[RMDB]
Chemical mapping of a 207-nucleotide RNA with 2A3. Values cover nucleotides 27 to 156. Reactivities are rounded to 0.1 and cut off at 0 and 3.

RNA sequence: GGGAACGACUCGAGUAGAGUCGAAAAUCAAAUGCACAUUUAUUACGCAUGACAUAAUAGGCUGGCAUGUCGCGAGAGAAGUGAUUUCUGUUAGGGGCACCGGGGAAAGCUUCUAGAAAGAGUUGCUUUGAUCGGGGCUUAGCCACCAGCCCCGUGCCGAACGGCCAGACUUCGGUCUGGCCGUUCGAAAAGAAACAACAACAACAAC
Reactivity to 2A3 in 0.01 (KOAc 150mM, MgCl2 10mM, bicine 150mM(pH8.5), 24C), signal-to-noise 1, nucleotides 027 to 156: u060c030a060a050a050u100g100c010a030c030a130u060u180u300a200u260u300a180c050g010c010a000u050g050a020c040a050u300a170a070u070a220g030g000c060u000g000g020c030a040u040g010u010c010g050c000g300a000g010a000g000a010a040g000u040g010a010u020u200u050c010u000g030u010u020a010g010g020g020g060c040a110c140c100g000g020g010g000a020a010a020g000c000u000u010c010u020a050g070a080a070a000g030a010g000u000u000g000c000u000u000u050g010a010u000c000g000g020g070g000c020u050u080a000g020c000c000a030c000c000a000g000c000c010c000c000g010u030g050c030